[RMDB]
RNA sequence: GGGAACGACUCGAGUAGAGUCGAAAAGGUGCGAAUCACUGAUUGGUCUAAUCCUAGUCAUUCUGUGUUCCAUGAGGCAUUCACUAAAAGCCUAGCUCGCCUACGAUCAGGUGGGUUACCGCUGUUAAGUGUCUGUAGGAUUCGUCCUGCAGGCGCUAAAAGAAACAACAACAACAAC
Reactivity to 2A3 in 0.01 (KOAc 150mM, MgCl2 10mM, bicine 150mM(pH8.5), 24C), signal-to-noise 9, nucleotides 027 to 126: g080g010u060g030c060g040a050a030u170c020a020c050u040g020a060u040u070g040g040u060c040u090a080a080u080c030c050u030a020g030u030c010a030u070u000c030u050g040u010g020u070u000c000c020a040u090g030a040g040g000c050a060u090u080c050a060c080u100a040a040a030a030g010c000c000u000a010g000c000u000c010g000c000c010u070a110c080g170a170u160c090a010g000g020u010g000g020g000u010u020a040c030c030g020c040u050g050u140u160a080
Reactivity to DMS in 0.01 (KOAc 150mM, MgCl2 10mM, bicine 150mM(pH8.5), 24C), signal-to-noise 9, nucleotides 027 to 126: g010g010u010g000c080g010a080a050u030c030a060c040u010g000a070u010u010g010g010u030c040u010a070a100u030c080c080u000a040g010u010c040a040u010u000c020u010g000u010g010u000u000c000c020a060u010g010a080g010g010c040a060u010u020c080a080c110u020a050a070a080a050g010c000c070u000a040g010c020u000c020g010c000c000u000a110c260g010a110u040c150a020g010g020u000g000g000g000u000u000a030c140c200g000c030u000g010u010u020a070